Source: RMDB library OK2TRN, as collected in RNAgym. Structure probing data (DMS and 2A3) for a 177-nucleotide construct. DMS (dimethyl sulfate) methylates the pairing face of unpaired adenines and cytosines. For 2A3, 1,371 sequencing reads were counted. The RNA was probed in 150 mM KOAc, 10 mM MgCl2 and 150 mM bicine (pH 8.5) at 24 C.
RNA sequence: GGGAACGACUCGAGUAGAGUCGAAAAUUCGUCUUGGCGAUAGCCAGCGCUGGGCCGGCCAACAGCCGUGAGAUCAACUUGUCCACCUCGGCAUCGAAGUCGGCGGCCGGAUAGACGGCGCUGACCACAUCACCGUAGCGUUCGCGCUACGGUGAUGAAAAGAAACAACAACAACAAC
Reactivity to DMS in 0.01 (KOAc 150mM, MgCl2 10mM, bicine 150mM(pH8.5), 24C), signal-to-noise 1, nucleotides 027 to 126: u000u000c050g000u000c040u000u000g000g020c010g020a090u000a020g040c060c010a020g000c000g030c050u000g000g000g000c040c000g000g000c000c030a030a170c250a210g000c000c000g000u010g000a230g000a090u010c110a060a120c160u010u000g000u000c020c040a100c110c110u010c050g060g000c070a070u010c140g030a120a090g000u000c010g000g000c060g040g050c030c000g000g000a180u000a130g030a160c030g060g000c000g010c000u000g020a040c000c100a170
Reactivity to 2A3 in 0.01 (KOAc 150mM, MgCl2 10mM, bicine 150mM(pH8.5), 24C), signal-to-noise 1, nucleotides 027 to 126: u050u020c030g020u050c080u050u170g200g050c000g030a080u030a070g110c040c010a010g050c010g000c000u060g000g070g000c000c000g030g050c010c000a100a100c110a080g000c000c000g020u020g010a070g020a080u110c070a040a190c120u130u120g020u080c050c000a060c090c000u110c070g040g010c010a020u060c060g050a040a020g130u100c000g000g000c000g000g040c000c000g000g000a050u050a080g180a040c020g000g010c010g000c010u000g010a020c000c020a090
2A3 adducts were read by reverse transcription with SuperScript II with manganese. Values cover nucleotides 27 to 126.